An RNA of 177 nucleotides, treated with 2A3 and DMS and read out base by base.

RNA sequence: GGGAACGACUCGAGUAGAGUCGAAAAGAUAUGGAUCCCACGCAGCGCGAAACGAUGUAUCGGAAACGAUACCAUCGGAGCUGGUGGGAUCCUAAGUCAAACAUAUCAGGGUUCGCCCUGAUAUGAACCUAAGGAGUCUGUUCGCAGACUCCUUAGGAAAAGAAACAACAACAACAAC
Reactivity to 2A3 in 0.01 (KOAc 150mM, MgCl2 10mM, bicine 150mM(pH8.5), 24C), signal-to-noise 2, nucleotides 027 to 126: g000a000u000a000u030g000g000a010u000c000c070c000a000c020g300c000a020g000c000g020c060g300a280a050a000c010g010a000u000g010u000a010u000c000g000g000a000a000a000c000g000a000u020a020c110c040a010u010c000g000g000a020g010c000u000g000g020u000g010g050g000a000u000c000c000u000a000a000g000u000c010a000a050a010c010a000u010a000u000c000a010g030g010g110u080u150c240g200c060c010c020u000g000a000u000a000u000g000a020a010
Reactivity to DMS in 0.01 (KOAc 150mM, MgCl2 10mM, bicine 150mM(pH8.5), 24C), signal-to-noise 3, nucleotides 027 to 126: g010a000u010a000u000g000g000a000u000c000c000c000a020c000g030c000a000g030c000g040c230g010a140a060a070c000g020a010u020g000u000a000u000c000g010g000a010a000a040c010g000a020u000a000c300c200a010u000c010g020g010a010g040c000u010g020g030u000g000g000g010a000u000c000c000u010a000a030g000u000c010a210a130a300c010a010u000a000u000c000a020g010g000g020u000u020c300g030c000c000c010u010g010a010u000a000u000g010a110a150
The data come from the RNA Mapping Database (RMDB), library TTRDES. Conditions: 150 mM KOAc, 10 mM MgCl2 and 150 mM bicine (pH 8.5), 24 C.